[RMDB]
RNA sequence: GGGAACGACUCGAGUAGAGUCGAAAAGGCAAUUACUUCGGUAAUUGCCAUAUUAACUUGAGAAAAGAAGGGCGCAACUCAAGAAAAUUGCGAAAUAAACAAACAACGAGAGCUUCGGCUCUCGUAAGAGUAUACCACUAUUCGUAGUGGUAUACUCAAAAGAAACAACAACAACAAC
Reactivity to DMS in 0.01 (KOAc 150mM, MgCl2 10mM, bicine 150mM(pH8.5), 24C), signal-to-noise 4, nucleotides 027 to 126: g000g010c000a000a000u000u000a010c010u000u000c120g020g010u010a010a000u000u020g010c000c000a010u000a010u010u000a060a150c020u000u000g000a070g020a100a060a060a220g010a080a070g000g000g000c030g030c050a040a100c020u000c040a040a090g000a070a090a080a070u000u010g000c080g010a070a050a080u020a090a060a070c140a050a060a140c240a100a030c000g000a010g000a010g010c000u000u010c220g010g000c000u000c000u000c000g000u000a030a060
Reactivity to 2A3 in 0.01 (KOAc 150mM, MgCl2 10mM, bicine 150mM(pH8.5), 24C), signal-to-noise 6, nucleotides 027 to 126: g010g010c000a000a010u000u000a010c010u030u090c240g060g000u010a000a000u000u000g000c000c000a000u010a000u000u050a020a020c010u020u030g040a010g050a040a190a050a040g110a060a110g070g020g020c050g020c050a030a010c010u010c040a040a030g050a100a140a030a050u120u150g040c050g080a060a060a080u220a040a110a030c070a030a090a010c040a040a010c010g000a000g000a000g000c000u030u050c200g080g000c000u000c000u000c000g000u000a000a000